[RMDB]
Overview:
Structure probing data (2A3 and DMS) for a 177-nucleotide construct. 2A3 adducts were read by reverse transcription with SuperScript II with manganese. The reactions ran in a buffer of 150 mM KOAc, 10 mM MgCl2 and 150 mM bicine (pH 8.5), at 24 C. For 2A3, 7,188 sequencing reads were counted. It was measured as part of the RMDB library OK2TRN. The DMS profile rests on 12,343 reads.

RNA sequence: GGGAACGACUCGAGUAGAGUCGAAAAUUCGUCUAGAGGUUUCAAUGUGUCUAUACGAAUUGGACACUGGGCGGUACACCGCUGCCAGUUGGAUGUUAACACUUAGGUAGGGGACACUCCUCUGGGAACGUAGCUAAUAGUUCGCUAUUAGCUACGUAAAAGAAACAACAACAACAAC
Reactivity to 2A3 in 0.01 (KOAc 150mM, MgCl2 10mM, bicine 150mM(pH8.5), 24C), signal-to-noise 5, nucleotides 027 to 126: u020u010c010g000u010c020u010a010g020a070g080g040u080u170u300c100a080a070u160g040u020g020u010c020u100a100u020a130c030g080a090a070u050u050g040g010a020c010a000c020u010g040g000g000c020g000g020u110a080c110a070c050c010g050c070u110g090c010c000a050g020u180u060g090g010a070u100g020u150u100a160a050c090a020c080u060u100a070g160g000u030a030g090g270g000g010a000c020a010c030u010c010c010u000c010u020g010g010g000a030
Reactivity to DMS in 0.01 (KOAc 150mM, MgCl2 10mM, bicine 150mM(pH8.5), 24C), signal-to-noise 8, nucleotides 027 to 126: u010u000c040g010u000c030u000a020g010a070g010g020u010u000u010c120a070a050u010g020u000g010u000c110u000a120u010a090c050g010a060a070u010u000g000g010a110c070a040c020u000g000g010g010c000g010g010u010a120c290a160c050c030g010c060u000g000c010c000a030g010u000u010g000g010a090u000g010u000u010a080a120c070a040c070u000u000a100g020g010u000a050g020g020g000g000a040c040a030c100u000c000c000u000c010u000g010g000g010a120